RNA sequence: GGGAACGACUCGAGUAGAGUCGAAAAGUCGCCGCAUCUACAUCAACGCCCAGCGCGGGCGAGGGAGGCGUCCUACGGGGGUGACCCAUUCGCCGGCAUGGUAGAGGACAGCAAGAUUGCCACGACGGGAUGGAUCGUAUUUCGAUACGAUCCAUCCAAAAGAAACAACAACAACAAC
Reactivity to 2A3 in 0.01 (KOAc 150mM, MgCl2 10mM, bicine 150mM(pH8.5), 24C), signal-to-noise 1, nucleotides 027 to 126: g010u000c010g020c060c000g020c020a020u010c000u060a100c030a150u110c030a080a090c020g050c000c000c000a080g080c300g060c070g100g010g010c010g000a000g030g030g000a190g020g070c040g010u000c010c000u040a180c160g230g000g000g010g000u040g060a190c000c020c010a050u010u000c010g000c010c000g030g000c020a040u080g030g000u020a020g000a010g050g000a000c010a020g090c020a020a070g030a090u040u170g080c000c020a050c060g040a010c050g060
Reactivity to DMS in 0.01 (KOAc 150mM, MgCl2 10mM, bicine 150mM(pH8.5), 24C), signal-to-noise 2, nucleotides 027 to 126: g000u020c040g010c000c180g000c060a090u000c030u000a110c040a140u000c090a060a140c090g020c120c020c020a080g000c160g000c110g000g050g020c020g020a040g020g020g010a110g010g000c020g000u000c020c000u000a160c140g000g000g000g030g040u000g000a120c040c000c000a190u000u000c040g020c050c000g020g080c020a090u000g030g030u000a090g000a100g020g000a050c070a060g000c040a050a070g000a060u000u000g020c040c050a110c040g010a150c090g000
An RNA of 177 nucleotides, treated with 2A3 and DMS and read out base by base.
DMS adducts were read by reverse transcription with MarathonRT.